[RMDB]
RNA sequence: GGGAACGACUCGAGUAGAGUCGAAAAGACGCUGAUGCGAUCGACUGUAAGAUAGAUACACUGAGAAGACAGAUACGUACGGCAAGUAUCGUCGCCAGAACUACAGUCGCAAAUUGCCGUACGAAGACAGUAUGCCAGCGUUCGCGCUGGCAUACUGAAAAGAAACAACAACAACAAC
Reactivity to 2A3 in 0.01 (KOAc 150mM, MgCl2 10mM, bicine 150mM(pH8.5), 24C), signal-to-noise 2, nucleotides 027 to 126: g130a020c010g020c080u160g090a160u270g040c000g000a050u140c040g050a130c000u000g000u030a080a080g030a100u080a010g030a050u080a070c090a000c060u050g030a050g100a200a050g050a000c000a000g040a030u040a150c000g000u000a000c000g030g000c000a020a030g010u050a040u040c000g000u010c090g080c000c000a040g010a070a000c000u040a000c050a000g000u000c000g000c040a040a080a000u010u000g000c000c040g000u000a010c050g000a000a040g010a000
Reactivity to DMS in 0.01 (KOAc 150mM, MgCl2 10mM, bicine 150mM(pH8.5), 24C), signal-to-noise 1, nucleotides 027 to 126: g010a000c010g030c030u080g000a080u000g000c190g000a120u040c090g000a000c000u000g000u090a010a000g010a300u000a170g070a000u000a090c140a270c000u000g030a230g000a060a030g000a300c210a300g000a060u000a090c000g000u000a000c080g000g000c080a000a000g000u000a060u000c090g030u000c010g020c090c100a060g000a010a060c040u000a010c000a000g000u000c090g000c100a130a200a100u000u000g000c040c000g090u000a070c000g090a180a080g000a030
This 177-nucleotide RNA was probed chemically with 2A3 and DMS. The DMS profile rests on 744 reads.